An RNA of 177 nucleotides, treated with 2A3 and DMS and read out base by base. For DMS the reverse transcriptase was MarathonRT.

RNA sequence: GGGAACGACUCGAGUAGAGUCGAAAAGGCUUCGACAAGUGGCAGCAACUUUAUGAGACAGUCUCCAACCAGCCGCACAGCAACGAAGCUCUCUGGUUGCUAAAGGAUGCCAAGAGAAGGAAUGCGGCUCCCGGGUAGGAUUCGUCCUACCCGGGAGAAAAGAAACAACAACAACAAC
Reactivity to 2A3 in 0.01 (KOAc 150mM, MgCl2 10mM, bicine 150mM(pH8.5), 24C), signal-to-noise 2, nucleotides 027 to 126: g000g040c000u030u010c020g110a060c020a200a020g060u020g160g000c030a030g000c000a020a070c020u150u140u070a090u250g050a050g000a000c050a020g050u040c020u000c060c000a030a100c020c000a010g000c000c030g000c000a000c080a100g070c010a000a080c050g040a150a010g020c000u000c030u000c020u020g000g020u020u030g030c060u150a080a080a060g150g090a060u150g000c000c000a120a010g100a010g050a070a010g080g070a130a040u040g030c000g000g000
Reactivity to DMS in 0.01 (KOAc 150mM, MgCl2 10mM, bicine 150mM(pH8.5), 24C), signal-to-noise 1, nucleotides 027 to 126: g000g030c070u000u000c010g030a170c180a170a030g020u030g020g000c050a030g000c000a080a090c040u000u000u070a070u110g020a300g000a030c120a070g070u000c010u020c000c010a020a070c000c060a160g000c050c040g000c030a050c300a070g000c000a050a030c030g100a150a040g000c000u000c060u000c000u030g000g000u000u000g000c140u050a080a020a120g000g000a090u000g000c000c050a040a010g020a160g000a010a170g020g000a220a050u000g000c000g050g060
For DMS, 1,125 sequencing reads were counted.
The reactions ran in a buffer of 150 mM KOAc, 10 mM MgCl2 and 150 mM bicine (pH 8.5), at 24 C.